[RMDB]
RNA sequence: GGGAACGACUCGAGUAGAGUCGAAAACGCAUUUCGAUGCGACCGUGGGGGUCCUCCUUGGAAUCCGUUGAUCUGUGAACUACUUCUGAAGCCUCCACGGAAGCACAGGGAGGAUUCUGGGAGGACGGAGGCACCCUUGAAGUUACUUCGGUAACAAAUGGUAAAAUGUAUUCGUACAUUUUACCAUAAAAGAAACAACAACAACAAC
Reactivity to DMS in 0.01 (KOAc 150mM, MgCl2 10mM, bicine 150mM(pH8.5), 24C), signal-to-noise 2, nucleotides 027 to 156: c050g000c030a100u000u010u010c090g000a070u000g000c020g000a060c010c020g000u010g010g010g010g030g010u010c000c000u000c010c020u000u000g080g010a060a050u010c020c010g040u010u000g000a040u000c040u080g000u000g010a150a120c120u000a300c010u000u000c020u010g000a050a080g000c010c000u000c010c000a300c050g010g010a010a000g010c010a020c030a040g000g010g000a010g020g000a080u000u000c000u010g000g000g000a050g000g000a020c040g010g020a010g030g040c020a030c010c010c020u010u010g020a100a080g000u000u000a000c010u000u020c160g020g000u000a020a060c020a070a130
Reactivity to 2A3 in 0.01 (KOAc 150mM, MgCl2 10mM, bicine 150mM(pH8.5), 24C), signal-to-noise 5, nucleotides 027 to 156: c020g000c010a020u080u140u160c230g140a020u010g000c010g040a030c000c050g070u250g020g020g000g010g020u010c010c000u000c010c020u100u230g110g090a010a010u010c010c000g090u150u010g000a000u000c000u000g010u010g030a070a080c070u200a080c000u300u030c000u010g020a030a010g000c000c000u010c000c000a030c020g000g000a000a000g000c000a000c000a000g000g000g000a020g000g000a000u000u000c000u010g010g000g000a010g000g000a010c020g000g000a000g000g000c000a030c000c010c000u020u110g140a130a020g010u010u000a000c000u020u090c230g070g000u020a010a020c010a040a130